[RMDB]
RNA sequence: GGGAACGACUCGAGUAGAGUCGAAAAGGACUGCGCAGUCCGGCAACAUCAGCAGAGAGCCCGCUAUACGUGACGGAUUGGCUGAAGCGUACAGAAAUAUUGAGCCUCCUGCAAGAGGCAGCCAACCAAAACGUACGUGAGUUCGCUCACGUACGAAUCUCAUGUAGUCCUUCGGGACUACAUGAGAAAAAGAAACAACAACAACAAC
Reactivity to DMS in 0.01 (KOAc 150mM, MgCl2 10mM, bicine 150mM(pH8.5), 24C), signal-to-noise 1, nucleotides 027 to 156: g020g000a020c000u010g030c070g050c080a090g020u000c000c020g030g000c060a010a090c040a110u000c010a150g000c060a050g010a210g000a120g000c040c000c000g070c040u000a060u000a040c040g000u010g000a220c140g000g010a150u000u010g010g000c000u000g000a070a220g000c040g030u020a260c010a050g060a030a080a060u000a120u000u000g000a090g030c030c000u000c010c000u000g000c220a130a160g010a070g020g060c000a040g000c050c020a060a030c020c180a070a040a080a090c010g030u000a000c010g050u000g030a040g020u000u020c300g010c000u000c000a000c020g030u020a000c000g000a020a070
Reactivity to 2A3 in 0.01 (KOAc 150mM, MgCl2 10mM, bicine 150mM(pH8.5), 24C), signal-to-noise 3, nucleotides 027 to 156: g000g000a020c020u080g000c120g040c100a050g020u060c040c000g020g040c010a030a050c000a050u150c010a000g040c020a010g070a010g010a020g130c030c020c000g030c030u080a080u010a130c070g080u090g070a040c030g070g050a250u010u040g040g000c010u020g060a070a020g000c010g020u040a070c020a030g160a100a170a030u280a060u200u150g040a010g010c000c010u020c000c030u090g040c040a070a030g000a020g030g000c000a000g000c000c010a000a030c000c000a020a040a010a020c000g000u010a000c000g000u010g000a000g020u100u130c160g020c050u000c000a010c000g000u000a000c000g010a010a030

Chemical mapping of a 207-nucleotide RNA with DMS and 2A3. 2A3 adducts were read by reverse transcription with SuperScript II with manganese. The reactions ran in a buffer of 150 mM KOAc, 10 mM MgCl2 and 150 mM bicine (pH 8.5), at 24 C. The DMS profile rests on 1,670 reads. The data come from the RNA Mapping Database (RMDB), library M2RFPK.